[RMDB]
RNA sequence: GGGAACGACUCGAGUAGAGUCGAAAAAGCGAGCACCUGGCUGUACGCAGCCAGGUCCUCGCAAAGGUAGACGGCUGGCACCUUAUAAGUUCAGUCAAUACAAAGUAAACAAGGAGCCUAGUAUGAACAAACCGUGGUGCGUUCGCGCACCACGGAAUCACCUAUUAGAGUUCGCUCUAAUAGGUGAAAAAGAAACAACAACAACAAC
Reactivity to 2A3 in 0.01 (KOAc 150mM, MgCl2 10mM, bicine 150mM(pH8.5), 24C), signal-to-noise 1, nucleotides 027 to 156: a000g000c010g000a010g010c020a000c010c000u000g040g000c010u030g000u070a030c230g020c040a010g000c000c030a010g030g030u000c000c000u000c010g030c040a000a010a010g020g000u020a050g010a270c120g000g000c000u020g000g000c010a010c010c000u100u260a170u110a300a000g050u150u000c000a010g010u000c000a000a000u070a030c010a000a130a000g150u130a060a140a070c060a080a090g070g040a040g060c040c000u030a030g020u110a130u230g010a110a030c030a110a120a010c000c020g000u000g000g050u000g000c000g080u110u020c260g000c040g000c150a000c000c000a000c000g010g000a000a000
The data come from the RNA Mapping Database (RMDB), library M2RFPK. Chemical mapping of a 207-nucleotide RNA with 2A3. Reactivities are given for positions 27 through 156. The reactions ran in a buffer of 150 mM KOAc, 10 mM MgCl2 and 150 mM bicine (pH 8.5), at 24 C.